Source information: An RNA of 177 nucleotides, treated with 2A3 and DMS and read out base by base. For DMS the reverse transcriptase was MarathonRT. In probing experiments dimethyl sulfate is read out at A N1 and C N3, which are open when not base-paired. 2A3 adducts were read by reverse transcription with SuperScript II with manganese.
RNA sequence: GGGAACGACUCGAGUAGAGUCGAAAACAGUACUUCACGCGCCUGGUAGGAUUCGAACCUACGACCCACGGAUUCGAAGUCCGGCACUCUAUCCAGCUGAGCUACAGGCGCAUGCUGGAUGGGUGGAAUAGCAUCGAGUAUUCGUACUCGAUGCUAUAAAAGAAACAACAACAACAAC
Reactivity to 2A3 in 0.01 (KOAc 150mM, MgCl2 10mM, bicine 150mM(pH8.5), 24C), signal-to-noise 2, nucleotides 027 to 126: c000a000g060u110a070c040u080u130c070a020c120g100c020g020c010c020u050g070g030u050a040g030g020a090u110u120c140g050a100a070c020c010u030a010c020g040a070c000c020c020a040c020g030g030a070u100u050c040g080a070a020g050u010c000c000g070g030c010a010c010u030c030u080a030u000c000c000a000g010c020u020g010a010g040c010u100a120c080a220g170g000c010g000c000a000u070g000c000u020g000g010a010u000g000g000g020u050g000g060a090
Reactivity to DMS in 0.01 (KOAc 150mM, MgCl2 10mM, bicine 150mM(pH8.5), 24C), signal-to-noise 4, nucleotides 027 to 126: c080a110g020u010a050c070u010u010c080a090c070g000c090g000c040c010u000g000g040u010a020g000g010a180u000u010c130g020a090a090c020c020u000a090c040g010a140c020c030c020a130c050g010g010a030u000u000c150g010a100a140g010u000c010c000g000g010c000a020c010u000c010u000a020u000c000c000a010g020c010u000g000a060g000c030u010a090c280a090g020g000c000g000c030a010u010g010c000u000g000g000a010u000g000g000g020u010g000g010a100